[RMDB]
RNA sequence: GGGAACGACUCGAGUAGAGUCGAAAAGUAGUGCUCGAGAGGGAGGCUGUCACGCAGAGCUUUUAGAUCUUCUGAUCUUUCCCUCCUCCAUAUCGCUUAUGCGUCAAGCGAUAGACGCAUAAUUAAACCACUAUCUACUGUUCGCAGUAGAUAGUGGAAAAGAAACAACAACAACAAC
Reactivity to 2A3 in 0.01 (KOAc 150mM, MgCl2 10mM, bicine 150mM(pH8.5), 24C), signal-to-noise 5, nucleotides 027 to 126: g030u100a000g050u020g080c040u040c160g150a090g020a060g070g060g000a010g000g040c020u030g090u140c020a010c100g030c040a040g040a040g140c000u000u010u020u030a010g000a010u030c020u280u030c140u300g000a010u000c000u010u020u010c010c000c000u030c000c000u000c010c010a060u070a050u120c070g010c050u000u020a010u020g000c020g000u010c020a060a100g150c060g170a090u060a110g010a000c000g000c010a000u000a010a040u080u160a070a050a020
Reactivity to DMS in 0.01 (KOAc 150mM, MgCl2 10mM, bicine 150mM(pH8.5), 24C), signal-to-noise 5, nucleotides 027 to 126: g020u000a090g020u010g010c170u010c070g020a070g020a130g010g000g010a040g020g010c070u010g000u000c060a080c130g010c070a100g000a140g000c010u000u000u000u000a010g000a010u000c000u000u000c280u000g010a020u000c000u010u000u000c000c000c000u010c020c010u000c000c020a180u010a060u000c050g030c280u000u000a010u000g000c010g000u000c010a050a110g010c220g010a090u000a050g010a020c000g010c000a010u000a010a020u010u010a050a090a120

Structure probing data (2A3 and DMS) for a 177-nucleotide construct. Values cover nucleotides 27 to 126.